[RMDB]
RNA sequence: GGGAACGACUCGAGUAGAGUCGAAAAUCGCGUAACAACAAUAAUUGCAUUUAUCGGAUGGCGCCAGCUUCAAUUUAAUUAUAAAUAACAUGUUCAACUUUUUAUACUAUUUUCCCUGCGUCAAAGUGGGCGUUGCAACUGCCCCCGGAAAAUCACACAUAUCACUCACCUUCGGGUGAGUGAUAUGAAAAGAAACAACAACAACAAC
Reactivity to 2A3 in 0.01 (KOAc 150mM, MgCl2 10mM, bicine 150mM(pH8.5), 24C), signal-to-noise 1, nucleotides 027 to 156: u050c050g000c050g070u080a060a020c090a000a020c020a040a160u120a200a120u060u300g020c040a110u150u220u090a180u120c070g000g000a060u000g040g010c000g010c040c040a000g070c040u040u010c050a000a050u210u080u300a150a060u150u090a110u090a220a000a120u090a090a050c040a040u090g000u070u100c020a040a040c030u080u050u000u010u000a140u060a090c090u000a060u080u060u000u000c000c000c000u030g000c000g000u090c060a030a030a030g170u300g030g030g000c160g160u160u110g020c000a030a020c070u000g000c000c070c000c000c030g120g000a000a050a020a000u160c000a000c000a000